[RMDB]
RNA sequence: GGGAACGACUCGAGUAGAGUCGAAAAGAUUAGGUGUCCGUGAGGAAUCGAAACGAGGCACGAGAUUCCAAGGUCUCUGUAUCACGCCGUCUCGUGACGUCUAUCUAGUCACAUUCGGCAUAACAAACGUAAGUAGUUGGUUCGCCAACUACUUACGAAAAGAAACAACAACAACAAC
Reactivity to DMS in 0.01 (KOAc 150mM, MgCl2 10mM, bicine 150mM(pH8.5), 24C), signal-to-noise 3, nucleotides 027 to 126: g010a060u010u000a110g000g000u010g000u000c000c000g020u010g050a160g010g000a150a070u040c080g030a090a090a070c010g020a100g000g010c040a040c070g020a140g010a060u000u000c000c050a130a130g020g000u020c010u000c050u000g000u010a050u010c110a120c170g000c000c020g000u010c000u000c190g040u000g000a010c010g000u020c100u040a060u030c170u040a060g010u000c010a000c010a020u000u010c000g000g000c010a060u000a030a070c150a080a080a190
Reactivity to 2A3 in 0.01 (KOAc 150mM, MgCl2 10mM, bicine 150mM(pH8.5), 24C), signal-to-noise 2, nucleotides 027 to 126: g040a060u000u060a030g050g000u010g000u000c000c010g020u010g050a090g050g110a010a060u090c020g000a020a080a050c030g010a090g020g020c000a000c030g040a090g000a030u120u000c020c010a030a000g100g020u040c030u010c000u000g090u030a050u090c030a010c060g000c000c000g000u000c010u000c060g000u000g000a010c010g030u000c020u010a010u000c020u050a000g000u010c000a000c000a010u010u020c000g000g000c000a000u010a010a020c050a010a050a000